[RMDB]
RNA sequence: GGGAACGACUCGAGUAGAGUCGAAAAGCGGCGAUGUCAGGCUCGCGGUGAGUACCGCGCUUCGGUGCGGCCGGUACGGAUCCGGCAGGCCCAUGGCCAUGCGCAGCGGGGGACGGAUGAACACCUCGGCCAAUUAAUGGUUCGCCAUUAAUUGGCCAAAAGAAACAACAACAACAAC
Reactivity to 2A3 in 0.01 (KOAc 150mM, MgCl2 10mM, bicine 150mM(pH8.5), 24C), signal-to-noise 3, nucleotides 027 to 126: g040c050g030g000c030g040a040u030g010u080c030a010g050g020c030u040c090g040c010g000g010u050g030a080g000u020a010c000c000g030c040g000c070u150u080c100g100g090u120g020c040g010g030c010c000g000g000u010a020c030g040g060a030u000c020c000g050g000c020a080g010g020c000c000c020a120u140g020g010c040c010a050u140g020c010g000c020a040g000c010g020g000g000g010g040a020c030g090g010a050u050g040a100a010c040a050c030c020u040c050
Reactivity to DMS in 0.01 (KOAc 150mM, MgCl2 10mM, bicine 150mM(pH8.5), 24C), signal-to-noise 2, nucleotides 027 to 126: g010c020g020g030c000g000a100u010g020u010c070a020g030g020c050u000c130g070c000g000g050u000g010a300g000u010a000c020c000g020c210g010c040u000u000c080g000g010u000g000c060g000g010c000c020g000g000u020a090c110g010g000a100u030c000c000g020g000c050a080g010g000c030c040c070a030u040g020g020c010c080a070u000g030c050g020c010a070g010c010g040g000g000g000g000a100c080g010g010a050u010g000a070a090c060a090c030c040u010c080